[RMDB]
RNA sequence: GGGAACGACUCGAGUAGAGUCGAAAAGCGGUACACUUCGGUGUACCGCAAAACCGGAAUAAACAUGGGCCCAUGAGCCGAAACGGAAGGGCGUCCGCGCAAAAACGACGCCGUUCGCGGCGUCGAACAACCAGUACUUCUUCGGAAGUACUGGUUGAAAAGAAACAACAACAACAAC
Reactivity to DMS in 0.01 (KOAc 150mM, MgCl2 10mM, bicine 150mM(pH8.5), 24C), signal-to-noise 2, nucleotides 027 to 126: g020c000g010g000u000a000c000a000c000u000u020c170g000g010u010g010u000a000c000c000g010c000a000a010a060a130c000c010g010g010a120a070u000a080a100a070c130a070u000g000g000g020c010c030c010a080u000g010a140g010c010c010g000a040a090a070c090g000g000a120a030g010g010g010c030g010u010c020c020g030c100g010c100a050a060a060a100a140c040g000a000c000g000c000c000g040u000u000c170g020c020g010g010c020g010u000c000g000a010a080
Reactivity to 2A3 in 0.01 (KOAc 150mM, MgCl2 10mM, bicine 150mM(pH8.5), 24C), signal-to-noise 1, nucleotides 027 to 126: g000c000g000g000u000a010c020a000c000u060u110c190g050g000u030g000u010a000c000c000g010c010a010a010a000a010c000c020g000g110a120a170u220a110a170a000c070a100u090g010g030g010c020c020c020a080u160g020a030g070c050c050g090a250a130a010c070g000g040a010a030g070g020g020c020g040u040c000c020g000c010g020c060a040a010a030a000a070c000g010a010c000g020c000c010g030u010u020c160g000c020g050g000c000g000u000c000g000a010a020
Annotation:
This 177-nucleotide RNA was probed chemically with DMS and 2A3. For DMS, 2,039 sequencing reads were counted. DMS adducts were read by reverse transcription with MarathonRT. Conditions: 150 mM KOAc, 10 mM MgCl2 and 150 mM bicine (pH 8.5), 24 C. Values cover nucleotides 27 to 126. The 2A3 profile rests on 1,862 reads.